[RMDB]
RNA sequence: GGGAACGACUCGAGUAGAGUCGAAAAGGCUCAGCCCGGUUGGCAACCGGGUGUCGAGUGCAUGGGCAUAAGCCCGCCUAACUGUGAGACCAACAAGUCGAGCAGAUGCGAAAGCAGGCCCAAGUGACUUACUCAGGAGAUUCGUCUCCUGAGUAAGAAAAGAAACAACAACAACAAC
Reactivity to DMS in 0.01 (KOAc 150mM, MgCl2 10mM, bicine 150mM(pH8.5), 24C), signal-to-noise 7, nucleotides 027 to 126: g010g000c000u000c000a280g010c000c010c000g010g010u000u000g020g010c240a190a180c000c000g020g000g000u000g000u020c060g000a020g010u000g010c060a120u000g000g000g020c010a090u030a090a090g000c010c060c020g020c010c100u010a090a120c020u000g010u000g000a300g000a020c000c040a090a130c300a110a170g000u000c000g000a300g000c010a020g000a060u010g000c010g000a070a060a150g020c050a130g010g010c000c000c030a050a080g010u020g010a220
Reactivity to 2A3 in 0.01 (KOAc 150mM, MgCl2 10mM, bicine 150mM(pH8.5), 24C), signal-to-noise 7, nucleotides 027 to 126: g090g010c000u000c010a000g000c010c000c010g010g020u040u040g100g010c080a060a020c000c000g000g020g000u010g010u050c070g000a000g000u030g060c030a080u060g000g010g000c020a060u050a300a030g000c000c010c000g010c000c000u050a140a080c000u010g010u020g020a010g000a010c020c010a060a120c090a190a030g000u010c000g000a010g000c000a010g010a080u090g000c000g050a130a020a010g010c020a030g060g020c000c010c000a040a030g120u100g090a060